[RMDB]
RNA sequence: GGGAACGACUCGAGUAGAGUCGAAAAGAUAUGGACGAUGAACUACUUCCGCCCUCGCACUCGGAAACGAGUGAACUACGAGUAACAAGAAGCAUCGUCCUAAGUCAAAGACGGCUUCGGCCGUCAACGUAGGAAUAAAGUUCGCUUUAUUCCUACGAAAAGAAACAACAACAACAAC
Reactivity to 2A3 in 0.01 (KOAc 150mM, MgCl2 10mM, bicine 150mM(pH8.5), 24C), signal-to-noise 9, nucleotides 027 to 126: g020a020u040a020u100g000g000a000c010g000a000u020g020a120a170c120u180a080c020u300u020c060c100g190c130c020c010u000c000g020c000a000c000u010c010g000g040a040a030a020c010g000a010g010u010g010a060a010c090u190a050c050g020a000g040u130a210a170c190a300a110g020a010a000g000c000a000u000c000g000u000c000c000u010a020a000g000u000c020a030a000a220g010a000c000g000g030c010u080u140c270g200g000c020c000g000u000c000a000a000
Reactivity to DMS in 0.01 (KOAc 150mM, MgCl2 10mM, bicine 150mM(pH8.5), 24C), signal-to-noise 9, nucleotides 027 to 126: g000a030u000a300u000g000g000a030c000g020a020u000g010a110a080c120u010a300c020u000u000c020c080g000c300c270c010u000c020g000c010a010c000u000c010g000g000a090a090a190c000g010a010g000u000g010a060a030c140u010a280c020g020a010g020u020a070a140c270a200a050g010a030a010g010c000a010u000c000g000u000c010c000u000a020a090g000u000c050a120a130a160g000a010c010g000g000c000u000u010c250g050g010c010c000g010u000c000a010a050